Record summary: Structure probing data (DMS and 2A3) for a 177-nucleotide construct. For DMS, 1,508 sequencing reads were counted. For 2A3 the reverse transcriptase was SuperScript II with manganese. The RNA was probed in 150 mM KOAc, 10 mM MgCl2 and 150 mM bicine (pH 8.5) at 24 C. The data come from the RNA Mapping Database (RMDB), library OK2TRN.
RNA sequence: GGGAACGACUCGAGUAGAGUCGAAAAGCUGACGGAUAACGUGGUGUUAUAGAUAUAUAUUUUACGUCAUAAUAAUAUCAUAGCUCGAGAAAUAUAUAUAUCGUAGCUAAAUUCUUAUCGUCAGCGAGGUAUAUACGCUGUUCGCAGCGUAUAUACCAAAAGAAACAACAACAACAAC
Reactivity to DMS in 0.01 (KOAc 150mM, MgCl2 10mM, bicine 150mM(pH8.5), 24C), signal-to-noise 2, nucleotides 027 to 126: g030c020u000g000a020c010g010g010a030u000a000a040c240g000u000g000g000u000g010u000u000a020u000a060g000a010u000a040u000a020u000a040u000u000u000u000a140c030g010u000c020a080u010a070a100u000a070a040u000a200u000c050a080u000a090g010c020u010c010g020a300g000a050a080a120u010a100u000a050u000a050u010a040u010c020g000u000a010g030c010u020a120a090a090u000u010c090u010u000a030u000c000g020u000c000a010g000c000g030a030
Reactivity to 2A3 in 0.01 (KOAc 150mM, MgCl2 10mM, bicine 150mM(pH8.5), 24C), signal-to-noise 2, nucleotides 027 to 126: g000c000u010g000a000c010g170g090a030u000a010a000c060g000u010g050g050u040g010u010u020a050u060a150g000a000u030a010u010a010u010a130u080u110u060u060a030c010g010u000c020a010u050a290a050u070a120a020u040a070u160c050a050u070a070g030c040u030c090g070a100g050a140a110a010u100a010u000a000u000a000u000a020u070c010g000u030a000g000c000u020a110a000a040u140u010c000u010u020a010u020c000g010u000c010a000g000c020g010a010